[RMDB]
RNA sequence: GGGAACGACUCGAGUAGAGUCGAAAAGGAGUGCUACCGAAAGGUAGCACUCCAACAAAUCGGUGUAAGUGCAGCCCGAAUUACACCGUGCGGCACAGCGGAAACGCUGAUGUCGUAUAAAGGGCUACUCAGUAGCUAUGUUCGCAUAGCUACUGAGAAAAGAAACAACAACAACAAC
Reactivity to DMS in 0.01 (KOAc 150mM, MgCl2 10mM, bicine 150mM(pH8.5), 24C), signal-to-noise 3, nucleotides 027 to 126: g020g020a020g030u000g000c010u000a010c000c000g010a120a110a160g020g020u010a010g000c000a010c000u000c000c000a020a060c150a050a040a080u000c010g010g010u000g020u010a000a020g010u000g000c080a100g030c000c000c000g010a170a070u000u000a010c010a000c000c000g020u000g020c010g020g000c000a020c000a000g000c020g000g000a120a070a140c000g010c000u010g000a040u010g040u000c000g030u000a030u020a070a140a070g030g000g000c010u000a160
Reactivity to 2A3 in 0.01 (KOAc 150mM, MgCl2 10mM, bicine 150mM(pH8.5), 24C), signal-to-noise 1, nucleotides 027 to 126: g010g000a010g000u020g010c010u000a000c000c030g040a070a090a060g020g000u000a000g000c010a000c000u000c000c000a000a000c000a000a010a000u100c010g010g000u000g000u000a020a030g050u050g140c050a000g010c000c000c000g010a030a010u000u000a000c000a000c020c010g010u030g000c000g000g000c010a000c000a010g000c000g030g000a080a070a010c020g010c000u000g010a050u000g000u000c000g000u000a000u010a030a070a010g010g000g000c010u010a050